[RMDB]
RNA sequence: GGGAACGACUCGAGUAGAGUCGAAAACGUAAGAUUUAUCAGUAAGGAGGUGAUGAUGAAGAUGUCUUCAAAGGAUGAAAAGGGAUGUGCCAGUGAGACAAGGAGGUGGCAGGGUAGGGGUAUUCCAGAAGGCCAGAACAACAUUUUUAAAAGUAGACUACCAUUUAAUGUUCGCAUUAAAUGGUAGAAAAGAAACAACAACAACAAC
Reactivity to 2A3 in 0.01 (KOAc 150mM, MgCl2 10mM, bicine 150mM(pH8.5), 24C), signal-to-noise 3, nucleotides 027 to 156: c040g020u070a050a020g000a110u060u080u110a140u160c050a060g060u060a110a020g040g030a020g010g030u030g010a040u010g000a010u050g010a020a020g030a050u080g030u010c020u070u000c060a070a080a030g080g000a040u070g070a020a000a060a050g070g000g040a060u060g020u030g030c010c000a000g020u020g060a080g000a060c050a050a000g030g020a020g060g030u100g040g000c080a040g010g000g010u060a030g000g000g000g000u040a060u120u020c020c000a010g010a020a010g040g000c030c010a020g030a040a010c030a030a000c000a030u070u060u060u100u230a050a100a020a040g070u190a080g040a020
Reactivity to DMS in 0.01 (KOAc 150mM, MgCl2 10mM, bicine 150mM(pH8.5), 24C), signal-to-noise 2, nucleotides 027 to 156: c080g020u000a080a090g020a160u000u000u000a070u030c020a100g060u020a120a100g010g010a160g000g030u000g010a090u000g030a080u010g000a070a050g010a070u000g000u000c050u000u000c070a050a060a150g020g020a090u010g010a020a070a050a060g000g030g010a080u020g030u000g030c000c050a120g020u000g030a070g000a210c060a030a090g000g030a140g020g030u000g010g030c100a030g000g030g040u000a070g000g000g020g040u000a030u020u000c010c030a080g020a030a090g000g000c000c030a080g010a030a140c070a040a070c040a040u000u000u000u020u050a030a040a120a130g000u000a100g010a230
The data come from the RNA Mapping Database (RMDB), library OK3TST.
The record gives the reactivity of an RNA of 207 nucleotides to 2A3 and DMS.
For 2A3, 2,208 sequencing reads were counted.
Values cover nucleotides 27 to 156.
Conditions: 150 mM KOAc, 10 mM MgCl2 and 150 mM bicine (pH 8.5), 24 C.